[RMDB]
RNA sequence: GGGAACGACUCGAGUAGAGUCGAAAAACGGUGAAGUGCGCUUCGGGCAGCUGGGCGAGGUUGGCCUUGGCCCCGGCGUGGCGAGCCCCGAGCAGGGCGCCGAGCAUCCCGUCCUUCUCGCUGCGGCCCAUGCGCAAUAAUUCGUUAUUGCGCAUGGAAAAGAAACAACAACAACAAC
Reactivity to 2A3 in 0.01 (KOAc 150mM, MgCl2 10mM, bicine 150mM(pH8.5), 24C), signal-to-noise 4, nucleotides 027 to 126: a000c060g000g040u110g060a120a050g060u070g130c090g000c040u060u120c020g020g030g000c030a070g010c030u030g020g020g010c020g060a160g070g070u120u120g100g060c030c000u030u070g050g010c010c000c000c020g040g000c030g040u040g020g000c040g030a040g030c020c010c020c020g020a040g040c050a080g000g040g000c070g000c030c000g000a020g020c010a050u030c020c010c010g000u020c000c000u070u080c050u020c050g040c030u070g010c010g010g060c000
Reactivity to DMS in 0.01 (KOAc 150mM, MgCl2 10mM, bicine 150mM(pH8.5), 24C), signal-to-noise 5, nucleotides 027 to 126: a080c060g010g010u000g000a080a090g010u000g010c060g020c040u000u010c190g010g000g010c060a140g010c040u000g010g000g020c020g000a060g000g010u000u000g020g010c130c030u000u000g020g010c020c010c000c020g010g000c010g000u000g020g000c030g000a170g010c090c040c010c030g000a080g010c050a100g000g010g000c120g010c020c020g000a070g000c060a080u010c020c010c010g000u010c030c020u000u000c040u010c070g020c050u010g010c050g000g000c100
Record summary: This 177-nucleotide RNA was probed chemically with 2A3 and DMS. Conditions: 150 mM KOAc, 10 mM MgCl2 and 150 mM bicine (pH 8.5), 24 C. For DMS the reverse transcriptase was MarathonRT. Source: RMDB library OK2TRN, as collected in RNAgym.